[RMDB]
RNA sequence: GGGAACGACUCGAGUAGAGUCGAAAACUCAGAGGGUGUGUGGUCAGAAGUGCUUUCAUCUGGCAGGCUGGAGAUCCAAGCCCAACUUGGCCACUCACCAGAUGGUUUGUAACUUGGGCAGAUUAUCUCGUCUUAAAGAAUUCGUUCUUUAAGACGAAAAAGAAACAACAACAACAAC
Reactivity to DMS in 0.01 (KOAc 150mM, MgCl2 10mM, bicine 150mM(pH8.5), 24C), signal-to-noise 9, nucleotides 027 to 126: c020u000c030a140g010a210g010g010g020u000g000u000g010u000g000g010u010c010a040g010a110a230g010u000g010c020u000u000u000c110a050u000c070u000g010g010c060a100g010g010c090u000g000g010a100g000a070u010c040c050a040a040g000c070c040c070a070a140c070u000u000g010g000c000c000a010c010u000c010a030c010c020a060g010a090u000g000g000u000u000u000g010u000a070a100c110u000u000g000g000g000c050a050g000a070u000u000a070u000c100
Reactivity to 2A3 in 0.01 (KOAc 150mM, MgCl2 10mM, bicine 150mM(pH8.5), 24C), signal-to-noise 6, nucleotides 027 to 126: c060u070c020a030g060a100g150g040g000u000g010u010g000u010g020g010u010c010a010g030a180a040g110u040g060c020u070u120u130c080a190u050c060u060g050g000c020a040g080g000c030u050g020g010a100g020a040u060c040c020a040a000g000c000c020c020a020a050c040u050u050g000g000c010c000a010c010u010c000a010c000c000a000g010a010u000g000g020u010u040u060g050u040a120a100c060u060u080g030g060g000c030a030g010a140u060u040a050u110c070

The record gives the reactivity of an RNA of 177 nucleotides to DMS and 2A3. 2A3 adducts were read by reverse transcription with SuperScript II with manganese. The reactions ran in a buffer of 150 mM KOAc, 10 mM MgCl2 and 150 mM bicine (pH 8.5), at 24 C. The 2A3 profile rests on 14,715 reads. For DMS, 34,283 sequencing reads were counted. Reactivities are given for positions 27 through 126.